RNA sequence: GGGAACGACUCGAGUAGAGUCGAAAAUCCAGGUUCGCCUGGAAGAGACGGGGUCUCACGAUGAGGAUCCCAAGCCGACGAUCCUGAAGCCUCCACGGGGGAGGCUUGAGGAUCCGAGUGAGACGGAGGCACCCUAAAAGGCGGUUUCGACCGCCAACAAUGAUCAUGGAUUCGUCCAUGAUCAUUGAAAAGAAACAACAACAACAAC
Reactivity to 2A3 in 0.01 (KOAc 150mM, MgCl2 10mM, bicine 150mM(pH8.5), 24C), signal-to-noise 3, nucleotides 027 to 156: u000c010c000a000g030g020u060u080c200g090c060c010u040g000g030a040a030g100a010g030a030c100g050g010g030g000u000c000u000c000a030c010g120a170u230g110a070g000g020a000u010c010c000c000a000a000g000c010c000g160a300c010g010a060u010c000c000u040g060a140a050g070c030c010u070c060c030a020c050g000g000g000g000g020a010g000g000c040u000u010g030a110g020g000a000u000c010c000g000a000g010u030g000a010g000a000c030g000g010a030g030g030c060a080c000c030c000u040a060a070a030a060g020g000c020g000g050u020u110u130c220g110a040c020c000g020c000c000a000a000
Reactivity to DMS in 0.01 (KOAc 150mM, MgCl2 10mM, bicine 150mM(pH8.5), 24C), signal-to-noise 2, nucleotides 027 to 156: u000c010c020a010g000g000u000u000c240g030c000c020u020g070g020a010a080g000a170g010a130c050g030g030g010g020u000c000u000c000a040c000g010a190u000g000a220g080g000a030u020c010c000c000a030a050g010c040c000g020a140c120g000a020u000c000c000u010g000a050a090g020c020c030u000c010c040a300c070g010g000g000g010g000a030g040g000c020u000u000g000a070g040g000a000u000c020c010g000a110g020u000g040a040g010a120c020g010g000a140g020g000c010a110c010c020c010u150a020a070a070a130g000g040c000g010g030u000u000u000c160g000a040c020c000g000c000c000a000a060
Conditions: 150 mM KOAc, 10 mM MgCl2 and 150 mM bicine (pH 8.5), 24 C. Chemical mapping of a 207-nucleotide RNA with 2A3 and DMS. The data come from the RNA Mapping Database (RMDB), library RNAMAK.